[RMDB]
An RNA of 207 nucleotides, treated with DMS and 2A3 and read out base by base.
RNA sequence: GGGAACGACUCGAGUAGAGUCGAAAAGUAAACCGUUUUACACACAUGACGUGUGGUGUUUACCAAUUUGCUGUAUCAGCUGCUGAGUUGAAAUACAUGACAGCUAACAAUCUGACUGCACCACGCAAUGCUUAUGACGCAAUGGUUUUAAGCUCAAGGUGGAUGAAAUAUUCGUAUUUCAUCCACCAAAAGAAACAACAACAACAAC
Reactivity to DMS in 0.01 (KOAc 150mM, MgCl2 10mM, bicine 150mM(pH8.5), 24C), signal-to-noise 3, nucleotides 027 to 156: g020u000a050a050a070c020c010g000u000u010u020u010a190c040a150c140a080c010a150u020g040a100c170g020u020g050u000g000g020u020g020u010u000u000a050c050c000a040a130u000u000u000g030c000u010g050u010a150u000c140a060g040c020u010g030c010u010g030a170g020u000u000g010a090a100a180u010a050c000a090u000g000a070c020a000g000c000u000a030a090c080a050a100u000c070u020g020a050c070u000g020c020a060c050c010a020c030g050c030a080a070u010g000c050u010u000a050u000g010a110c060g000c110a100a090u000g010g020u000u010u000u000a060a090g000c020u010c030a040a300
Reactivity to 2A3 in 0.01 (KOAc 150mM, MgCl2 10mM, bicine 150mM(pH8.5), 24C), signal-to-noise 6, nucleotides 027 to 156: g080u080a040a050a050c070c040g020u050u010u110u140a100c110a000c010a010c020a070u150g080a140c080g020u010g000u010g000g040u020g020u000u160u050a150c060c030a090a090u070u090u090g040c030u000g030u080a080u100c040a010g020c010u050g020c040u160g140a020g080u060u050g050a080a130a030u230a040c060a050u100g110a040c000a000g000c000u060a040a030c050a050a080u050c090u090g050a060c070u050g000c010a000c000c020a000c010g020c010a040a050u070g000c010u070u090a020u100g020a010c030g030c130a070a170u040g020g040u000u040u040u040a020a010g030c010u030c080a050a100

The data come from the RNA Mapping Database (RMDB), library OK3TST. 2A3 adducts were read by reverse transcription with SuperScript II with manganese. For DMS, 4,642 sequencing reads were counted.